[RMDB]
RNA sequence: GGGAACGACUCGAGUAGAGUCGAAAAGACGAGUUUAAGGAAUAUAACCGUAAACAGUUAUUAACGCAGGGCGUCGUUAAACCGCGCAAUACAGAAGAAGAGCAGAUGGUUGCGCAGAUGAUACAGCAAGCACAACAGCCUAAUGCUGAACUUGUCGGUCCCUUAAGUGGUUCGCCACUUAAGGGACAAAAGAAACAACAACAACAAC
Reactivity to 2A3 in 0.01 (KOAc 150mM, MgCl2 10mM, bicine 150mM(pH8.5), 24C), signal-to-noise 3, nucleotides 027 to 156: g010a000c020g000a000g030u030u030u140a140a070g130g070a250a010u100a020u050a120a020c040c020g060u060a010a000a140c040a030g000u070u020a180u090u100a080a010c050g000c050a070g070g050g020c020g030u110c010g020u050u050a030a080a050c080c040g000c000g000c010a010a000u180a180c020a020g120a110a020g030a100a030g030a030g060c080a000g050a040u030g010g000u030u010g000c000g030c010a000g000a100u150g000a000u030a100c010a030g030c030a000a120g040c040a010c010a290a080c000a040g060c000c010u160a120a040u110g030c020u010g000a010a050c000u010u010g020u020c020g030